[RMDB]
RNA sequence: GGGAACGACUCGAGUAGAGUCGAAAACGGCAUGAUACCACCGUUAUCGGGUCAACAGAGUAGUUGCAAAUGACAACAAUGCUCAGGGUUAUGCUCUCGCUGCCUAAUGGCGGUGCAGGAAACCCACAAAAGAUAUUGAUCUUCGGAUCAAUAUCAACUCUGCGGCUUAGUUCGCUAAGCCGCAGAGAAAAGAAACAACAACAACAAC
Reactivity to 2A3 in 0.01 (KOAc 150mM, MgCl2 10mM, bicine 150mM(pH8.5), 24C), signal-to-noise 2, nucleotides 027 to 156: c000g000g000c030a000u110g040a050u050a050c010c020a010c020c020g290u150u060a010u060c070g000g020g000u000c050a000a010c030a040g000a010g030u060a000g010u000u010g040c090a120a240a300u260g070a210c010a030a000c000a040a300u130g030c000u000c030a010g020g000g000u030u000a080u200g070c040u020c020u060c080g000c000u000g000c000c020u230a280a100u120g000g000c000g000g000u000g000c020a000g000g050a160a020a020c030c000c050a040c070a010a070a020a000g000a000u000a000u000u010g000a000u000c020u050u040c280g070g000a000u000c000a000a000u000a000u000c000a000a050
The record gives the reactivity of an RNA of 207 nucleotides to 2A3.
For 2A3 the reverse transcriptase was SuperScript II with manganese.
The reactions ran in a buffer of 150 mM KOAc, 10 mM MgCl2 and 150 mM bicine (pH 8.5), at 24 C.